[RMDB]
Structure probing data (2A3) for a 207-nucleotide construct. The RNA was probed in 150 mM KOAc, 10 mM MgCl2 and 150 mM bicine (pH 8.5) at 24 C. The data come from the RNA Mapping Database (RMDB), library OK3TST.
RNA sequence: GGGAACGACUCGAGUAGAGUCGAAAAUCUGGAAAUUAAUUUGGUAGUUCUUUUGCCUCAUAACUUGUAAGUUAGUAUUGUUUUUACUUCCAUAACUCUGUUACAAGUAAAUUAUUAGAAACACACUUUAAGGAGUAUCAGCAUGUACUAUAGUAACCGAUGUCAUGUGGUUCGCCACAUGACAUCGAAAAGAAACAACAACAACAAC
Reactivity to 2A3 in 0.01 (KOAc 150mM, MgCl2 10mM, bicine 150mM(pH8.5), 24C), signal-to-noise 1, nucleotides 027 to 156: u000c030u040g090g020a170a030a010u110u070a050a170u040u080u150g020g000u050a060g090u070u030c000u030u130u180u080g010c020c030u090c040a070u080a250a080c030u040u030g050u100a050a000g080u080u060a000g000u010a010u050u060g150u010u000u000u070u000a060c020u180u000c040c000a010u050a070a030c030u030c060u070g010u070u020a000c000a030a010g050u110a010a170a000u100u060a030u040u050a010g040a000a060a000c050a000c010a000c060u020u080u100a070a030g020g000a000g000u020a010u010c000a000g070c020a000u050g010u060a030c030u000a020u010a030g050u070a030a030c010